[RMDB]
RNA sequence: GGGAACGACUCGAGUAGAGUCGAAAAUCUAAAAUCAUUGCUGUUAUCUACAGCGGCAGGGAGUCUCUAAUAUUCCCAUCGGGAACCUAUUACUGUGUCACCACUAAGGCUAAGUCCGUUCAACAAGCACCACAGGUCUUCGGACCUGUGAAAAGAAACAACAACAACAAC
Reactivity to 2A3 in 0.01 (KOAc 150mM, MgCl2 10mM, bicine 150mM(pH8.5), 24C), signal-to-noise 6, nucleotides 027 to 129: u030c010u060a000a000a030a070u180c100a110u080u130g000c000u000g030u110u060a130u150c100u100a010c030a030g000c000g000g000c010a000g010g030g000a040g040u000c010u000c000u080a090a120u080a100u080u050c020c000c000a020u070c060g020g000g030a020a030c020c030u040a100u100u110a050c060u060g010u000g030u110c010a050c040c010a050c010u020a020a000g010g000c010u010a060a000g050u000c000c000g000u050u070c010a020a030c000a070a000g030c040a030c030
Reactivity to DMS in 0.01 (KOAc 150mM, MgCl2 10mM, bicine 150mM(pH8.5), 24C), signal-to-noise 5, nucleotides 027 to 129: u000c120u010a040a020a050a020u090c160a110u050u040g000c040u020g000u010u070a110u070c000u090a080c060a060g050c060g000g040c070a010g000g080g030a080g030u030c030u000c010u060a120a070u040a190u000u000c000c040c010a080u040c000g040g020g010a050a060c080c040u050a100u100u010a070c110u050g020u020g020u050c050a000c060c030a040c000u050a060a120g020g030c000u020a040a060g010u040c040c050g050u060u000c090a060a060c070a000a100g060c080a140c150